[RMDB]
RNA sequence: GGGAACGACUCGAGUAGAGUCGAAAAGGGGUCGCAUGGUCAAAAUGUAGGGAGAUCCCGAGGCUGAAGCCUCCACGGCCUUAGGGAUCAUCGAUCUACAUGAACCGGCCAUGCGACGGAGGCACCCAAAAGUAGUCACGCUUCGGCGUGACUACAAGCCUAAGAGAGUGUUCGCACUCUCUUAGGCAAAAGAAACAACAACAACAAC
Reactivity to 2A3 in 0.01 (KOAc 150mM, MgCl2 10mM, bicine 150mM(pH8.5), 24C), signal-to-noise 2, nucleotides 027 to 156: g070g030g000g000u000c000g020c000a020u000g010g010u000c010a090a020a180a000u010g010u010a000g000g010g010a000g020a010u000c000c020c000g000a000g000g000c000u010g020a060a000g020c000c040u000c000c010a000c000g000g000c000c000u070u170a300g000g000g040a010u000c000a000u300c020g000a000u020c000u000a000c000a010u020g030a110a070c130c100g010g000c010c010a000u010g000c000g000a000c000g010g000a000g010g000c000a010c000c000c010a090a190a010a000g000u000a000g000u000c000a010c010g010c010u000u100c300g110g010c030g010u000g000a000c000u000a000c000a000a000